[RMDB]
RNA sequence: GGGAACGACUCGAGUAGAGUCGAAAAACCUGCCAGCUUCGGCUGGCAGGUAAAAAGAUAUGGACAAGGUAUGCAGCGAAGAACUGGAUCGGAAACGAUCCAGGGAGCUGGGUACUUGUCCUAAGUCAAAAAACUGAGGCACUUCGGUGCCUCAGAAAGCCUACUUAAGAUUCGUCUUAAGUAGGCUAAAAGAAACAACAACAACAAC
Reactivity to 2A3 in 0.01 (KOAc 150mM, MgCl2 10mM, bicine 150mM(pH8.5), 24C), signal-to-noise 1, nucleotides 027 to 156: a010c020c000u010g000c020c000a030g000c050u130u230c300g150g000c030u020g020g030c000a000g010g000u000a000a000a000a020a020g010a010u050a020u100g000g000a000c020a030a000g060g060u150a070u290g030c010a040g030c030g260a300a030g000a070a030c030u000g000g000a000u000c000g010g010a000a150a030c020g020a010u000c000c000a000g000g000g010a000g000c000u030g190g000g000u120a050c000u000u000g000u000c000c000u000a050a010g010u010c030a190a030a000a190a000a000c000u010g000a030g000g000c010a000c000u020u040c140g080g020u010g010c000c020u000c000a000g000a000a000